An RNA of 177 nucleotides, treated with 2A3 and DMS and read out base by base.

RNA sequence: GGGAACGACUCGAGUAGAGUCGAAAACACAUGUCUCAGGAAGAGAUCGUCCGUAGUAGCAAGCUGCUGGAGGGUAUCUCGGUCAGCAUCUCGAUUGGCAAGACGUCCACUCCGGGUACGCGCCGCUACUCAAGGGUAUCUUCGGAUACCCUUGAGUAAAAGAAACAACAACAACAAC
Reactivity to 2A3 in 0.01 (KOAc 150mM, MgCl2 10mM, bicine 150mM(pH8.5), 24C), signal-to-noise 4, nucleotides 027 to 126: c080a010c010a060u130g050u000c010u000c020a030g110g090a090a110g030a010g010a030u060c050g110u000c020c000g020u090a030g010u010a020g050c060a130a020g030c020u030g000c020u080g040g020a040g040g020g020u040a060u020c020u020c010g000g030u050c030a030g020c030a140u050c040u030c080g200a220u010u040g040g000c030a050a050g070a090c040g070u060c000c000a120c040u030c030c000g000g000g000u020a010c020g030c010g000c000c030g010c000u000
Reactivity to DMS in 0.01 (KOAc 150mM, MgCl2 10mM, bicine 150mM(pH8.5), 24C), signal-to-noise 2, nucleotides 027 to 126: c140a130c130a040u010g000u000c020u000c020a160g000g010a120a120g030a040g000a010u010c020g010u010c030c010g050u000a030g010u000a030g000c040a070a130g020c050u020g010c080u010g020g010a050g000g000g040u010a050u000c070u000c060g010g000u010c050a080g020c040a080u040c090u000c140g000a060u000u010g000g000c020a120a040g010a040c110g020u010c020c020a070c020u010c070c020g030g000g050u010a020c100g010c020g000c100c070g030c070u010

It was measured as part of the RMDB libraries RFM100 and RFMREP. The reactions ran in a buffer of 150 mM KOAc, 10 mM MgCl2 and 150 mM bicine (pH 8.5), at 24 C. For 2A3 the reverse transcriptase was SuperScript II with manganese.